Chemical mapping of a 207-nucleotide RNA with DMS and 2A3.
The RNA was probed in 150 mM KOAc, 10 mM MgCl2 and 150 mM bicine (pH 8.5) at 24 C.
For 2A3, 2,273 sequencing reads were counted.
DMS adducts were read by reverse transcription with MarathonRT.
[RMDB]
RNA sequence: GGGAACGACUCGAGUAGAGUCGAAAAUGCGCAGUCUUUAAGGGAUGCUACAUAUGUCGCGGGAAAUUCAAUAUAUAAGAGCUCUCGUCUGUUGCAAGAUAUAAGUUACUGAGCAUGCUAUGUUGGAAAGAUAGCAUGCUGGAGUAAUAAUGAAUUGACUCUUUAUCCACUUCGGUGGAUAAAGAGUAAAAGAAACAACAACAACAAC
Reactivity to DMS in 0.01 (KOAc 150mM, MgCl2 10mM, bicine 150mM(pH8.5), 24C), signal-to-noise 1, nucleotides 027 to 156: u010g000c190g030c030a150g000u010c040u000u020u020a070a130g040g030g030a040u010g020c000u010a040c000a070u000a110u030g010u000c070g020c030g000g050g020a070a050a070u030u000c010a060a100u010a060u000a080u010a100a150g010a080g020c040u000c020u000c060g020u010c050u000g010u010u000g000c010a070a050g020a130u010a080u010a050a210g010u000u000a020c000u020g000a000g010c000a020u000g000c000u000a020u000g020u000u030g060g000a180a090a170g020a050u000a050g000c000a030u000g000c000u020g010g020a000g040u000a020a050u010a050a120u070g010a090a140u000u000g000
Reactivity to 2A3 in 0.01 (KOAc 150mM, MgCl2 10mM, bicine 150mM(pH8.5), 24C), signal-to-noise 4, nucleotides 027 to 156: u060g000c020g000c010a000g020u030c070u110u290u180a080a060g030g010g010a020u110g010c010u040a020c010a040u130a040u070g040u060c080g030c140g060g060g060a060a090a020u220u130c030a080a020u050a020u040a020u050a150a090g030a010g030c010u000c010u020c050g050u010c010u020g050u090u220g000c040a040a000g050a020u110a040u060a180a000g000u000u000a000c000u010g030a010g010c000a000u000g010c000u010a030u070g130u140u040g140g050a030a050a050g050a020u000a000g020c000a000u000g000c000u000g000g020a010g000u010a010a010u060a060a080u090g070a030a090u110u150g060